[RMDB]
RNA sequence: GGGAACGACUCGAGUAGAGUCGAAAAGAUAUGGAUCCCUUGAGGUGGACAUGACCGCUCGGAAACGAGAUGGUCAACAGCCACUGGGAUCCUAAGUCAAAGUCGAGUAGGUUCGCCUACUCGACAAGAUUCUAUAUCCGUUCGCGGAUAUAGAAUCAAAAGAAACAACAACAACAAC
Reactivity to DMS in 0.01 (KOAc 150mM, MgCl2 10mM, bicine 150mM(pH8.5), 24C), signal-to-noise 5, nucleotides 027 to 126: g000a050u000a300u010g000g000a010u000c000c000c010u000u020g040a130g010g010u000g000g010a070c100a250u000g000a010c000c000g000c000u000c000g000g000a090a060a140c000g010a000g010a060u010g010g010u000c000a020a040c260a190g000c000c000a030c010u000g000g000g000a010u010c000c000u000a010a060g000u000c040a110a110a130g000u000c000g000a000g010u000a000g000g000u000u020c200g010c000c000u000a010c010u000c000g000a000c000a020a040
Reactivity to 2A3 in 0.01 (KOAc 150mM, MgCl2 10mM, bicine 150mM(pH8.5), 24C), signal-to-noise 4, nucleotides 027 to 126: g000a010u040a030u110g010g000a010u000c020c040c000u030u220g260a190g000g050u040g000g080a070c070a180u070g000a000c010c000g010c010u000c000g010g050a060a040a030c010g000a010g080a220u200g020g000u000c000a010a020c040a020g040c000c000a010c030u030g000g000g000a010u000c000c000u020a070a010g020u010c050a130a070a000g000u000c000g000a000g000u000a000g000g090u040u110c260g120c050c000u010a000c000u000c000g000a000c000a000a000